The record gives the reactivity of an RNA of 177 nucleotides to DMS and 2A3. For 2A3, 1,578 sequencing reads were counted. Source: RMDB library M2PK50, as collected in RNAgym. For 2A3 the reverse transcriptase was SuperScript II with manganese. Conditions: 150 mM KOAc, 10 mM MgCl2 and 150 mM bicine (pH 8.5), 24 C.
[RMDB]
RNA sequence: GGGAACGACUCGAGUAGAGUCGAAAACCCGUUCAUUUCGAUGAACGGGAGUGGGUAACCCUAGGACCAGUAGUGGGACCCGUAGUGGCCGUGGGACCAGUAAAGAGUUAACAUUCGUGUUAACUAAGGGAAAUAUACGUUUCGACGUAUAUUUCCCAAAAGAAACAACAACAACAAC
Reactivity to DMS in 0.01 (KOAc 150mM, MgCl2 10mM, bicine 150mM(pH8.5), 24C), signal-to-noise 2, nucleotides 027 to 126: c000c010c000g010u000u000c000a000u000u010u010c190g010a020u000g000a010a000c000g000g010g000a020g000u000g010g000g000u020a060a160c010c010c010u000a100g000g000a130c070c040a090g010u010a090g010u010g010g010g000a090c030c020c030g010u010a080g020u000g000g000c020c020g010u000g000g010g000a130c060c050a100g010u010a080a090a100g000a040g020u000u000a010a000c010a020u010u010c230g000u000g000u000u000a010a000c000u020a050a140
Reactivity to 2A3 in 0.01 (KOAc 150mM, MgCl2 10mM, bicine 150mM(pH8.5), 24C), signal-to-noise 1, nucleotides 027 to 126: c000c010c000g010u000u000c000a010u060u000u110c210g130a010u000g000a010a000c000g010g020g000a060g050u100g040g010g020u050a150a140c050c020c000u040a080g100g000a120c030c000a000g050u050a010g060u180g060g040g020a070c010c010c010g000u020a040g020u030g040g000c040c040g010u050g040g060g000a150c030c030a000g000u060a020a160a080g130a000g000u010u010a000a010c020a020u060u140c160g060u090g000u030u010a030a030c040u040a010a130